[RMDB]
RNA sequence: GGGAACGACUCGAGUAGAGUCGAAAACGCCCUCGUCACGGGCAGGCACAGCCACGACGAUGCGGCGCUCCAGCAUCGGAGAAAAGUAGCACGGACAGCGAGAAAGCCCCGCUGAACCGAGGCGAAGCCGUUUAAUCCCUUUCGAGGGAUUAAACGGAAAAGAAACAACAACAACAAC
Reactivity to DMS in 0.01 (KOAc 150mM, MgCl2 10mM, bicine 150mM(pH8.5), 24C), signal-to-noise 9, nucleotides 027 to 126: c070g020c000c000c010u000c020g010u010c020a280c220g000g010g020c010a050g010g020c150a110c170a120g000c010c020a170c110g010a040c000g010a030u000g000c120g010g010c030g010c030u000c010c010a150g010c110a090u000c090g010g000a090g000a080a060a060a050g010u000a130g010c010a090c000g000g000a290c010a010g000c000g000a090g000a120a150a170g000c150c020c030c010g010c000u000g010a120a070c000c000g020a100g010g000c010g000a160a180g010
Reactivity to 2A3 in 0.01 (KOAc 150mM, MgCl2 10mM, bicine 150mM(pH8.5), 24C), signal-to-noise 6, nucleotides 027 to 126: c010g010c000c000c010u000c010g020u010c010a070c220g060g030g000c030a030g160g050c120a060c030a160g000c010c000a040c050g010a010c000g000a010u040g040c110g020g000c010g010c020u020c000c010a060g070c050a130u160c100g040g010a030g050a030a080a010a010g060u060a010g000c010a010c010g000g020a010c010a010g010c010g020a030g090a150a190a070g080c020c010c010c000g010c000u010g020a120a040c000c010g010a050g000g050c000g000a020a010g020

Background
This 177-nucleotide RNA was probed chemically with DMS and 2A3. 2A3 adducts were read by reverse transcription with SuperScript II with manganese. Source: RMDB library OK2TST, as collected in RNAgym.